[RMDB]
RNA sequence: GGGAACGACUCGAGUAGAGUCGAAAAGAGAUGCGGUCGCGUAGGUCCAUAAACUACAAAGCAUCGAAUGGACAGUUCAGACGAGGCGACCACUCGGAGAAAGGAACGAAAAGCUACUAAUGUAGCAGGAAUGCAUCAGGUUCGCCUGAUGCAUUCCAAAAGAAACAACAACAACAAC
Reactivity to DMS in 0.01 (KOAc 150mM, MgCl2 10mM, bicine 150mM(pH8.5), 24C), signal-to-noise 1, nucleotides 027 to 126: g000a060g000a020u000g000c080g000g000u000c030g000c140g000u000a300g000g080u010c000c020a000u020a060a030a270c130u010a020c270a050a030a090g000c110a010u000c000g000a210a030u000g000g000a000c030a260g030u120u000c070a140g000a300c020g000a070g020g000c010g000a030c050c000a070c080u020c120g000g000a160g050a000a020a020g000g000a000a070c000g000a070a150a080a030g000c000u000a000c000u000a080a080u050g000u000a040g000c030a170
Overview:
Structure probing data (DMS) for a 177-nucleotide construct. The reactions ran in a buffer of 150 mM KOAc, 10 mM MgCl2 and 150 mM bicine (pH 8.5), at 24 C. The DMS profile rests on 928 reads. Reactivities are given for positions 27 through 126.